[RMDB]
Conditions: 150 mM KOAc, 10 mM MgCl2 and 150 mM bicine (pH 8.5), 24 C. An RNA of 177 nucleotides, treated with 2A3 and DMS and read out base by base. 2A3 adducts were read by reverse transcription with SuperScript II with manganese. The 2A3 profile rests on 1,395 reads. For DMS, 1,718 sequencing reads were counted.

RNA sequence: GGGAACGACUCGAGUAGAGUCGAAAAAUUGAUGCUUUAUAUGACAUCAGGCAGUCUGAACCUUUGAUAAACAUGGAUAAUGUACCGAGAUCAGUACUAACUUUCAUGGACUGCGAGGCUAAGGACCAUCUGGGGUGUCUUUCGAGACACCCCAGAUAAAAGAAACAACAACAACAAC
Reactivity to 2A3 in 0.01 (KOAc 150mM, MgCl2 10mM, bicine 150mM(pH8.5), 24C), signal-to-noise 3, nucleotides 027 to 126: a000u070u050g000a000u030g000c020u240u220u130a220u070a130u280g130a100c010a020u000c010a010g070g000c020a010g010u000c010u140g100a200a170c010c000u040u040u190g270a270u140a110a030a010c020a020u000g000g020a000u000a110a100u150g000u000a000c000c040g140a070g040a280u180c080a000g000u000a000c000u020a010a100c030u000u040u030c000a040u000g110g000a080c070u030g010c030g020a030g010g010c040u080a120a030g020g000a010c020c000
Reactivity to DMS in 0.01 (KOAc 150mM, MgCl2 10mM, bicine 150mM(pH8.5), 24C), signal-to-noise 2, nucleotides 027 to 126: a020u020u000g000a010u000g000c020u000u110u000a130u040a130u010g000a160c000a040u000c010a060g000g030c090a000g030u000c000u020g000a190a020c130c000u000u000u030g000a230u000a100a100a120c010a010u000g000g020a000u000a070a060u010g010u030a000c040c080g000a300g000a240u000c280a090g000u020a000c020u000a050a120c200u040u000u000c020a000u030g000g000a070c060u000g000c040g000a050g000g000c030u000a070a160g000g010a000c010c130